This 207-nucleotide RNA was probed chemically with 2A3. For 2A3 the reverse transcriptase was SuperScript II with manganese.

[RMDB]
RNA sequence: GGGAACGACUCGAGUAGAGUCGAAAAGAUAUGGACGAUGGACGAGCUUUGAUCUAUAAGAGUAAGGAUAUGUCGGAAACGACAUAUCAGGAACUAUAGGGAGCUCGGUACAUCGUCCUAAGUCAAAGUAGCAAGACGGUUCGCCGUCUUGCUACAAUCUAUCGAUCUCGUUCGCGAGAUCGAUAGAAAAAGAAACAACAACAACAAC
Reactivity to 2A3 in 0.01 (KOAc 150mM, MgCl2 10mM, bicine 150mM(pH8.5), 24C), signal-to-noise 1, nucleotides 027 to 156: g000a000u000a000u030g000g000a000c000g020a000u000g030g030a000c010g000a000g020c000u300u280u010g000a000u040c000u000a000u070a130a190g100a050g170u120a090a010g040g000a010u000a000u000g000u000c000g000g000a000a000a000c000g000a000c000a010u000a000u010c000a000g080g030a000a020c000u000a000u000a010g000g010g000a010g010c000u010c020g000g010u030a000c000a000u000c000g000u000c000c000u000a000a000g000u000c010a000a030a080g000u000a010g010c000a000a000g000a010c000g040g030u030u060c260g060c100c000g000u000c000u000u000g000c000u010a000c000a000a000
For 2A3, 2,088 sequencing reads were counted. The reactions ran in a buffer of 150 mM KOAc, 10 mM MgCl2 and 150 mM bicine (pH 8.5), at 24 C.